[RMDB]
Structure probing data (2A3 and DMS) for a 177-nucleotide construct.

RNA sequence: GGGAACGACUCGAGUAGAGUCGAAAAACGCGAGGAUUCGUCCUCGCGUACAUAAGUGAGUUCGCCGGAUAGGUGCCUAAGUGAGUUCGCCGGAUAGCUGCCAAGCACAUAGUUUCGACUAUGUGAAAGCUUAAUAAUGCUUCGGCAUUAUUAAGCUAAAAGAAACAACAACAACAAC
Reactivity to 2A3 in 0.01 (KOAc 150mM, MgCl2 10mM, bicine 150mM(pH8.5), 24C), signal-to-noise 3, nucleotides 027 to 126: a000c010g000c010g000a000g010g000a020u050u050c180g100u010c070c000u000c010g000c010g000u010a000c000a050u220a050a030g090u040g130a040g030u040u090c030g010c060c020g000g030a080u070a110g030g080u070g030c000c020u100a120a030g020u030g110a050g040u030u040c020g000c030c000g030g010a070u070a060g000c020u030g030c010c000a040a030g040c020a010c000a000u000a000g010u040u060u050c160g050a020c010u000a000u020g000u010g040a120a030
Reactivity to DMS in 0.01 (KOAc 150mM, MgCl2 10mM, bicine 150mM(pH8.5), 24C), signal-to-noise 5, nucleotides 027 to 126: a020c010g000c000g010a020g020g000a010u000u020c190g020u000c000c000u000c000g010c000g010u000a010c110a050u010a090a110g020u000g000a090g010u000u000c070g010c010c040g010g010a120u010a090g020g010u000g010c040c030u000a070a110g010u010g010a100g000u000u000c050g010c030c030g010g000a110u010a070g010c040u010g020c030c070a090a140g010c030a010c010a010u000a010g010u000u000u010c190g010a030c000u000a000u000g010u000g000a040a040
Annotation: DMS adducts were read by reverse transcription with MarathonRT. Source: RMDB library M2PK50, as collected in RNAgym.